[RMDB]
RNA sequence: GGGAACGACUCGAGUAGAGUCGAAAACGUAGCCAGAUUUAACGAAUGGCUCAAGGCUUCUUGCAAGGUUACAAGCCCUAAAAAUUUGCGAGUAUAAUUGCUAGGGUGCCAUGCGUGGUUUUGCACGCGUGAACGUUCAGUUCGCUGAACGUUCACGAAAAGAAACAACAACAACAAC
Reactivity to 2A3 in 0.01 (KOAc 150mM, MgCl2 10mM, bicine 150mM(pH8.5), 24C), signal-to-noise 2, nucleotides 027 to 126: c070g030u010a000g010c000c020a050g080a200u160u170u240a060a070c050g020a050a060u010g010g000c000u020c020a060a000g020g010c010u020u000c000u030u060g030c010a050a070g050g000u040u050a040c020a060a030g020c030c020c010u170a170a180a070a120a160u080u080u130g000c010g010a010g080u050a050u020a140a090u030u040g010c000u040a010g000g110g040u110g030c000c020a070u080g000c000g010u060g000g090u020u030u090u160g070c020a010c020g000
Reactivity to DMS in 0.01 (KOAc 150mM, MgCl2 10mM, bicine 150mM(pH8.5), 24C), signal-to-noise 3, nucleotides 027 to 126: c130g000u000a050g000c000c020a110g020a110u000u000u010a150a110c160g000a150a100u000g010g020c010u010c080a090a090g010g010c040u000u000c000u000u000g020c050a060a040g010g010u000u010a050c070a100a300g000c000c080c020u000a000a080a120a050a080u010u010u000g020c120g000a220g010u010a040u010a120a060u010u010g010c160u000a080g000g010g000u020g000c050c030a090u010g020c020g010u010g000g010u010u010u000u000g020c060a020c060g000